[RMDB]
RNA sequence: GGGAACGACUCGAGUAGAGUCGAAAACCGCAGGAGCAGCAAACCGAAACCAUCAUGGACGAGGCACCAUGCGCCCCGGAGGACUUCCUAGCGGAGGAAUCCCAGCAACACACUGCGAGGAGUGAAGUAUCCACUAAAAUUUCGAUUUUAGUGGAUAAAAAGAAACAACAACAACAAC
Reactivity to DMS in 0.01 (KOAc 150mM, MgCl2 10mM, bicine 150mM(pH8.5), 24C), signal-to-noise 9, nucleotides 027 to 126: c020c010g030c070a050g000g000a060g010c110a060g020c080a080a120a110c050c030g000a090a090a090c100c070a070u000c070a050u000g010g000a110c070g010a100g010g010c060a120c030c060a040u000g000c130g010c020c020c030c050g020g010a100g010g010a280c050u000u000c010c000u000a130g010c050g020g010a060g010g010a130a100u000c010c000c010a140g010c090a050a050c070a110c070a050c050u000g000c060g010a100g010g000a080g010u000g010a080a100g010
Reactivity to 2A3 in 0.01 (KOAc 150mM, MgCl2 10mM, bicine 150mM(pH8.5), 24C), signal-to-noise 4, nucleotides 027 to 126: c010c000g000c020a010g020g050a020g030c080a000g020c040a140a030a110c020c010g060a100a020a030c040c020a060u170c020a040u100g000g050a040c070g100a140g070g010c060a020c030c010a040u050g020c020g030c010c000c020c010g010g020a030g010g050a050c010u070u040c010c010u040a100g000c030g040g030a020g010g050a030a030u020c000c010c010a010g040c010a020a060c040a010c010a010c060u050g030c030g100a070g040g020a030g020u050g010a040a010g050
Description: This 177-nucleotide RNA was probed chemically with DMS and 2A3. For DMS, 10,641 sequencing reads were counted. For DMS the reverse transcriptase was MarathonRT. Source: RMDB library OK2TRN, as collected in RNAgym. Conditions: 150 mM KOAc, 10 mM MgCl2 and 150 mM bicine (pH 8.5), 24 C.